Source information: Structure probing data (DMS and 2A3) for a 177-nucleotide construct. DMS (dimethyl sulfate) methylates the pairing face of unpaired adenines and cytosines. The reactions ran in a buffer of 150 mM KOAc, 10 mM MgCl2 and 150 mM bicine (pH 8.5), at 24 C. As a SHAPE reagent, 2A3 marks flexible, mostly unpaired nucleotides at the ribose 2'-OH.
RNA sequence: GGGAACGACUCGAGUAGAGUCGAAAAGAGCUUUUUUUCGAAAAAGCUCCGGCGCAAUGCCUAUGUGUACACUUCACAAGGGUUUGUGGUGGUCAUUGGCAAUACCAGCAAUCUUCGGAUUGCUGAACACCUAUAUCCAUUUCGAUGGAUAUAGGUGAAAAGAAACAACAACAACAAC
Reactivity to DMS in 0.01 (KOAc 150mM, MgCl2 10mM, bicine 150mM(pH8.5), 24C), signal-to-noise 7, nucleotides 027 to 126: g000a010g010c000u000u000u000u000u000u000u000c130g010a020a010a000a010a010g010c010u000c000c060g000g030c130g020c120a110a080u000g010c000c010u000a040u000g010u010g010u000a150c070a040c050u010u010c020a020c030a040a170g010g020g010u010u000u000g010u000g000g010u000g000g000u000c020a030u000u000g000g010c010a070a100u010a100c190c010a000g000c000a010a010u000c000u000u010c190g020g000a010u000u000g000c010u000g000a060a140
Reactivity to 2A3 in 0.01 (KOAc 150mM, MgCl2 10mM, bicine 150mM(pH8.5), 24C), signal-to-noise 6, nucleotides 027 to 126: g000a000g000c000u060u040u020u020u010u040u130c130g050a020a000a000a000a000g010c000u000c000c020g090g020c070g000c080a060a130u100g010c000c000u040a060u050g080u000g030u050a070c040a030c060u120u170c040a010c020a070a140g300g060g060u100u090u030g020u030g010g030u010g000g020u050c010a030u000u050g010g000c000a040a070u090a200c060c010a000g000c000a000a010u000c000u020u020c060g110g000a010u010u010g000c000u000g000a020a010